Background
Source: RMDB libraries RFM100 and RFMREP, as collected in RNAgym. An RNA of 177 nucleotides, treated with DMS and 2A3 and read out base by base. For 2A3, 5,350 sequencing reads were counted. Values are in units of 0.01, from 0 to 300, in steps of 10. Values cover nucleotides 27 to 126. The reactions ran in a buffer of 150 mM KOAc, 10 mM MgCl2 and 150 mM bicine (pH 8.5), at 24 C.
[RMDB]
RNA sequence: GGGAACGACUCGAGUAGAGUCGAAAAACUGCUCCAGUUGGCCUUCGGGUCGGCUGGGAAUUUUUGAAACCUUUACACUUUUUUGUGCUUUUCGUUGAUUUUUGCGGCCUUGAGCUGCAUGAUCGAAGAUCUAUAAAAACUUCGGUUUUUAUAGAUCAAAAGAAACAACAACAACAAC
Reactivity to DMS in 0.01 (KOAc 150mM, MgCl2 10mM, bicine 150mM(pH8.5), 24C), signal-to-noise 3, nucleotides 027 to 126: a020c140u010g000c130u050c010c000a000g010u000u000g010g000c000c000u010u050c120g020g010g050u000c000g000g010c020u020g000g000g000a010a000u000u000u000u010u000g000a170a180a170c020c020u010u030u030a180c070a070c040u000u030u020u010u030u010g000u010g010c170u020u010u010u000c110g010u010u000g000a010u000u010u030u010u010g000c020g010g030c000c020u020u010g010a190g020c000u000g000c000a000u000g010a020u000c000g010a070a120
Reactivity to 2A3 in 0.01 (KOAc 150mM, MgCl2 10mM, bicine 150mM(pH8.5), 24C), signal-to-noise 8, nucleotides 027 to 126: a000c110u090g000c040u000c020c010a010g000u010u000g010g010c010c000u020u040c250g080g000g000u010c000g000g000c000u010g000g010g010a020a030u040u050u010u020u090g110a100a100a060c020c000u100u200u220a070c070a040c050u190u230u130u080u150u190g030u040g040c040u090u070u080u090c070g100u060u240g020a040u020u060u060u060u030g000c000g010g010c000c020u150u300g070a090g040c000u000g000c010a000u000g010a010u000c010g010a080a010